An RNA of 177 nucleotides, treated with DMS and 2A3 and read out base by base. High DMS reactivity at an A or C suggests that its Watson-Crick edge is free. For DMS, 4,005 sequencing reads were counted. Conditions: 150 mM KOAc, 10 mM MgCl2 and 150 mM bicine (pH 8.5), 24 C.
[RMDB]
RNA sequence: GGGAACGACUCGAGUAGAGUCGAAAAUCGCGUGUUGCCCGAAAGGGAAUCGGGUUAAGAUUUCCCGAGCCGGGACGUGGCGGUUGACGGCGACGUUAGGAAGUCCGGAGACGCCGGCGGGGGCCUCCAUACGACGCGUUUUCGAACGCGUCGUAUGAAAAGAAACAACAACAACAAC
Reactivity to DMS in 0.01 (KOAc 150mM, MgCl2 10mM, bicine 150mM(pH8.5), 24C), signal-to-noise 3, nucleotides 027 to 126: u000c020g010c040g020u010g000u000u010g000c000c010c010g000a060a140a190g020g010g000a050a010u020c010g000g020g030u010u050a090a180g000a070u010u010u020c000c000c010g000a100g040c240c020g000g000g000a070c030g020u020g000g040c070g000g010u010u020g000a190c050g020g020c090g000a150c020g000u010u000a170g000g000a140a150g000u000c140c050g000g000a230g020a060c060g030c050c040g020g010c050g030g020g010g000g000c000c010u000c100
Reactivity to 2A3 in 0.01 (KOAc 150mM, MgCl2 10mM, bicine 150mM(pH8.5), 24C), signal-to-noise 2, nucleotides 027 to 126: u020c000g010c030g030u030g030u100u230g030c000c000c000g010a090a020a000g100g010g030a000a050u020c010g100g020g000u110u120a160a080g020a050u090u110u040c000c000c000g000a010g080c010c000g000g000g030a040c040g000u030g060g010c010g060g000u020u060g020a040c030g010g000c030g020a080c060g050u070u100a040g100g050a210a030g050u000c030c020g050g000a030g000a020c040g000c000c020g020g020c040g000g000g000g010g010c000c000u000c000